[RMDB]
RNA sequence: GGGAACGACUCGAGUAGAGUCGAAAAAGCCGGUCUACGGACCGGCAAAACGUUCAUCUUGUUUUACGGGCCGCAUUAAGAUUGAAGCCAAGGAACGGGGACUUCAGACUACGACUACGGUCGUAGAUUACGCCUCCGAGUUUCGACUCGGAGGCAAUCAUACUUCACACUUCGGUGUGAAGUAUGAAAAAGAAACAACAACAACAAC
Reactivity to 2A3 in 0.01 (KOAc 150mM, MgCl2 10mM, bicine 150mM(pH8.5), 24C), signal-to-noise 1, nucleotides 027 to 156: a000g000c000c000g000g010u000c010u030a060c300g010g030a010c000c000g010g000c010a000a010a000a020c050g070u050u030c060a180u000c110u120u170g070u080u140u030u130a100c070g060g000g000c020c050g050c120a120u170u030a140a060g050a150u030u100g080a020a010g000c000c000a060a050g110g000a120a000c060g040g000g000g020a000c040u100u040c050a090g060a150c000u000a000c000g000a000c000u040a020c300g130g000u030c000g020u000a000g000a000u000u070a030c070g000c020c020u060c000c020g000a000g000u020u060u300c140g060a020c020u000c000g000g010a000g040g010c000a000a000
Reactivity to DMS in 0.01 (KOAc 150mM, MgCl2 10mM, bicine 150mM(pH8.5), 24C), signal-to-noise 1, nucleotides 027 to 156: a170g020c000c030g040g000u000c010u000a090c210g010g000a000c000c010g040g000c040a000a020a020a140c030g000u000u000c040a110u030c100u000u000g010u000u000u000u000a150c030g010g010g000c020c010g030c070a090u010u000a040a240g000a170u010u000g000a060a050g020c030c000a040a110g000g040a120a120c140g000g010g040g010a040c040u000u050c050a120g030a250c010u000a060c040g000a080c010u000a060c300g080g010u010c000g040u000a020g020a130u020u020a070c070g030c000c000u000c000c000g040a040g030u010u000u000c240g000a110c020u000c010g000g060a020g040g030c000a010a040